The data come from the RNA Mapping Database (RMDB), library OK2TST.
The record gives the reactivity of an RNA of 177 nucleotides to DMS and 2A3.
For 2A3, 1,977 sequencing reads were counted.
For DMS, 1,367 sequencing reads were counted.
For DMS the reverse transcriptase was MarathonRT.
For 2A3 the reverse transcriptase was SuperScript II with manganese.

[RMDB]
RNA sequence: GGGAACGACUCGAGUAGAGUCGAAAACGGCACCUUCAUGUACGCGACGAGGCUUGAUGUUCUCGCAUCGGUUCUAAAAGUAUCGAGGGAGAAGCUGAAGGACAAGGGUGUCUCCAGCAUAUACGAGGCUCGUAAUUAUCUUCGGAUAAUUACGAGCAAAAGAAACAACAACAACAAC
Reactivity to DMS in 0.01 (KOAc 150mM, MgCl2 10mM, bicine 150mM(pH8.5), 24C), signal-to-noise 2, nucleotides 027 to 126: c200g000g000c000a040c040c040u000u000c030a150u030g010u000a030c100g020c060g010a070c120g030a150g010g020c030u000u000g020a130u010g000u020u000c000u000c070g010c100a160u000c020g020g000u010u000c040u000a080a080a190a190g000u000a000u000c040g020a060g030g000g020a060g000a070a040g000c000u000g020a170a120g000g000a030c020a090a090g000g000g000u000g010u000c000u000c010c020a150g020c060a070u010a100u010a070c200g000a140g000
Reactivity to 2A3 in 0.01 (KOAc 150mM, MgCl2 10mM, bicine 150mM(pH8.5), 24C), signal-to-noise 2, nucleotides 027 to 126: c020g000g020c020a000c000c020u030u030c120a150u140g060u110a080c080g050c070g130a110c030g060a100g050g070c020u110u090g020a040u120g100u100u030c020u000c000g040c030a280u020c020g000g000u030u020c050u080a090a130a000a030g030u010a010u020c000g000a020g000g090g030a040g030a020a000g050c020u030g040a040a000g030g000a000c020a030a040g030g000g010u020g000u000c000u010c000c000a020g060c040a070u110a020u030a210c040g010a040g160